This 177-nucleotide RNA was probed chemically with DMS and 2A3. Values cover nucleotides 27 to 126.
RNA sequence: GGGAACGACUCGAGUAGAGUCGAAAAUUGCAGAGAUCUGCGGAGACAGCUACAGCAACGCCAGCCCCAGCAGCGGCAGCUCAAAUCAGGGGGCUGCCAGCUCAUCUCCAGCCGCUAACUCGGACGCAACUCACAAUGUGUUCGCACAUUGUGAGUUAAAAGAAACAACAACAACAAC
Reactivity to DMS in 0.01 (KOAc 150mM, MgCl2 10mM, bicine 150mM(pH8.5), 24C), signal-to-noise 3, nucleotides 027 to 126: u010u000g020c020a080g020a130g000a080u000c070u000g000c030g010g000a160g010a070c160a030g010c050u000a060c090a100g000c060a050a050c110g020c060c040a080g010c010c010c020c080a140g020c110a050g020c020g020g010c010a020g000c010u000c000a060a050a100u000c270a150g020g020g000g000g010c000u000g000c000c020a080g030c010u010c070a110u000c020u010c040c020a130g010c040c030g000c060u010a070a050c050u000c050g010g010a090c180g010c110
Reactivity to 2A3 in 0.01 (KOAc 150mM, MgCl2 10mM, bicine 150mM(pH8.5), 24C), signal-to-noise 1, nucleotides 027 to 126: u050u030g020c010a020g080a040g020a260u050c040u040g040c050g090g000a010g030a040c040a000g000c040u160a080c060a050g050c030a100a040c090g040c030c020a020g020c010c010c000c020a000g030c020a010g000c030g030g000c000a000g000c000u000c000a180a300a260u170c060a080g080g140g000g000g030c000u010g000c000c000a000g000c020u000c020a090u040c020u030c010c000a010g070c020c010g050c020u040a030a030c040u010c030g040g040a010c020g070c030
2A3 adducts were read by reverse transcription with SuperScript II with manganese. The RNA was probed in 150 mM KOAc, 10 mM MgCl2 and 150 mM bicine (pH 8.5) at 24 C.